[RMDB]
RNA sequence: GGGAACGACUCGAGUAGAGUCGAAAAAGCGCUACCAACGAAAGGGGCCCCUGCCAUCUAGGAACACGCAGCGCAAUGCUGGUCUGUCCCUGCCUUCAUGGUAGCCAGCGCUCUGGCGAGGCAGACGGACCGGCAGUGCCGGCAGUGGGAUAGGCCACCAGGUAAAUCAAUUCGUUGAUUUACCUGGAAAAGAAACAACAACAACAAC
Reactivity to DMS in 0.01 (KOAc 150mM, MgCl2 10mM, bicine 150mM(pH8.5), 24C), signal-to-noise 2, nucleotides 027 to 156: a130g000c010g020c020u000a110c030c020a100a130c050g030a080a100a170g020g010g000g000c000c010c010c020u000g020c030c010a070u000c050u010a100g030g020a140a120c040a070c050g030c040a070g000c050g020c020a090a050u000g010c000u000g020g010u010c010u000g000u000c030c020c080u010g030c010c000u000u010c030a140u010g010g020u010a080g060c000c010a040g010c210g000c160u000c020u000g030g080c000g010a060g020g050c020a140g020a050c020g000g000a020c000c000g000g040c010a010g000u000g020c000c020g010g000c000a050g030u020g020g010g010a090u000a070g000g010c020c010a130
Reactivity to 2A3 in 0.01 (KOAc 150mM, MgCl2 10mM, bicine 150mM(pH8.5), 24C), signal-to-noise 5, nucleotides 027 to 156: a000g090c060g020c060u120a140c030c030a120a070c110g150a110a030a080g010g000g020g000c000c020c000c020u000g030c010c010a080u100c070u170a080g100g120a120a050c100a010c090g100c080a060g010c030g000c110a040a020u020g000c010u010g010g020u010c010u000g040u040c060c010c030u000g000c000c010u060u100c060a150u190g280g070u200a040g000c000c000a040g010c110g100c120u180c010u160g000g000c020g020a020g000g010c010a000g030a030c010g000g000a000c000c000g000g000c000a000g000u010g020c040c020g060g000c040a010g020u210g030g020g010a030u090a060g040g000c010c020a000
An RNA of 207 nucleotides, treated with DMS and 2A3 and read out base by base. DMS adducts were read by reverse transcription with MarathonRT. The RNA was probed in 150 mM KOAc, 10 mM MgCl2 and 150 mM bicine (pH 8.5) at 24 C.